[RMDB]
RNA sequence: GGGAACGACUCGAGUAGAGUCGAAAAGACGGUUAGCUCAAUGGACCGAGUCGUCCGCAAUACAACAGGCGACCUGUACGUGCGCGUAUAGAGGACCAACGACAGUGCACGAUGAACUAACCGUUGAAGUCACAGAGCUGUUCGCAGCUUUGUGACUAAAAGAAACAACAACAACAAC
Reactivity to 2A3 in 0.01 (KOAc 150mM, MgCl2 10mM, bicine 150mM(pH8.5), 24C), signal-to-noise 9, nucleotides 027 to 126: g050a000c010g000g000u000u000a010g000c010u010c010a070a200u170g120g040a040c040c060g020a070g000u000c000g010u010c000c010g020c040a070a120u230a120c080a120a010c010a060g000g020c000g010a020c000c000u030g000u030a010c000g000u000g000c030g000c000g020u030a030u030a100g090a040g040g030a040c030c020a060a030c050g090a030c030a020g010u010g020c000a000c010g040a040u030g000a000a000c000u000a000a000c000c000g000u000u010g010a010
Reactivity to DMS in 0.01 (KOAc 150mM, MgCl2 10mM, bicine 150mM(pH8.5), 24C), signal-to-noise 6, nucleotides 027 to 126: g000a030c000g000g010u000u010a000g010c060u000c000a060a110u020g010g010a060c030c030g000a160g010u000c020g000u000c020c040g020c120a080a120u040a140c300a110a130c130a090g000g010c010g010a120c030c010u000g010u030a170c020g010u000g010c070g030c010g020u020a040u030a080g010a120g000g000a160c110c100a070a090c180g000a070c120a090g030u020g010c080a010c020g000a120u000g000a000a030c010u000a000a000c000c000g000u010u000g010a160

Source: RMDB library OK1LIB, as collected in RNAgym. An RNA of 177 nucleotides, treated with 2A3 and DMS and read out base by base. For DMS, 16,464 sequencing reads were counted. The RNA was probed in 150 mM KOAc, 10 mM MgCl2 and 150 mM bicine (pH 8.5) at 24 C. For 2A3, 23,129 sequencing reads were counted.